[RMDB]
Conditions: 150 mM KOAc, 10 mM MgCl2 and 150 mM bicine (pH 8.5), 24 C. An RNA of 177 nucleotides, treated with DMS and 2A3 and read out base by base. 2A3 adducts were read by reverse transcription with SuperScript II with manganese.

RNA sequence: GGGAACGACUCGAGUAGAGUCGAAAACAAGAGCGCGUGGCGAGGAGUUGGUGGUCACCACGAUCUCGGAUAGAUGAGGUUCCAGGGCACGCAACACGCCCACGUAGUCUUUGUCGCCAAGCACUGCCAUGUCAUGCACCUUCGGGUGCAUGACAUGAAAAGAAACAACAACAACAAC
Reactivity to DMS in 0.01 (KOAc 150mM, MgCl2 10mM, bicine 150mM(pH8.5), 24C), signal-to-noise 2, nucleotides 027 to 126: c050a030a020g030a060g010c050g010c000g000u000g000g010c000g010a100g030g030a170g030u000u000g010g030u000g000g000u010c060a170c070c040a190c280g000a030u000c000u010c000g000g010a230u010a100g020a060u020g000a010g000g000u000u000c170c100a150g000g030g010c020a050c000g010c050a040a020c040a120c040g010c050c000c020a050c050g030u000a110g000u010c000u000u010u000g020u020c080g000c060c020a040a080g000c160a080c090u000g000c130
Reactivity to 2A3 in 0.01 (KOAc 150mM, MgCl2 10mM, bicine 150mM(pH8.5), 24C), signal-to-noise 2, nucleotides 027 to 126: c040a010a050g020a010g150c050g020c020g050u000g030g000c020g000a070g050g070a180g060u050u030g020g000u040g020g220u100c060a100c110c010a030c030g010a020u000c000u000c010g150g070a110u170a250g170a080u250g010a030g000g020u080u060c050c050a030g000g000g000c020a010c070g120c010a020a020c020a030c050g050c020c000c010a000c020g010u050a070g050u010c000u000u010u090g070u030c020g020c060c010a020a000g000c030a030c110u030g000c000